[RMDB]
RNA sequence: GGGAACGACUCGAGUAGAGUCGAAAAUCACGUGUGUAUUGUUCCUAUCCGUAAUAAUAUGCACAGGUAUGUAAGGAUAGAUAGACUACAUACUGCAACAGUCAGUAGUCUACAAGUACUGACUGAAGAUAGUAUUCACAUUCGUGUGGAUACUAUCAAAAGAAACAACAACAACAAC
Reactivity to 2A3 in 0.01 (KOAc 150mM, MgCl2 10mM, bicine 150mM(pH8.5), 24C), signal-to-noise 9, nucleotides 027 to 126: u120c030a040c130g000u010g000u000g000u000a010u020u050g020u020u020c030c020u090a210u090c080c050g020u020a000a020u020a040a010u020a030u050g010c030a020c010a040g050g020u010a010u010g020u020a060a150g070g030a070u080a100g110a070u120a060g100a090c010u000a000c000a000u010a000c010u080g050c080a110a050c000a060g000u000c000a000g010u020a010g070u070c060u100a110c070a060a050g060u010a000c000u000g000a000c000u000g010a020a000
Reactivity to DMS in 0.01 (KOAc 150mM, MgCl2 10mM, bicine 150mM(pH8.5), 24C), signal-to-noise 9, nucleotides 027 to 126: u040c060a090c150g020u010g030u000g010u000a010u000u010g020u010u000c060c060u030a090u040c190c160g010u020a030a010u010a030a020u000a010u010g000c010a020c040a180g000g000u000a000u010g010u000a040a090g000g000a090u020a110g010a150u050a080g010a120c020u000a010c000a010u000a010c000u010g000c210a080a190c010a000g000u000c000a010g010u000a010g000u020c110u050a120c300a060a140g010u000a010c010u010g010a010c000u000g010a070a070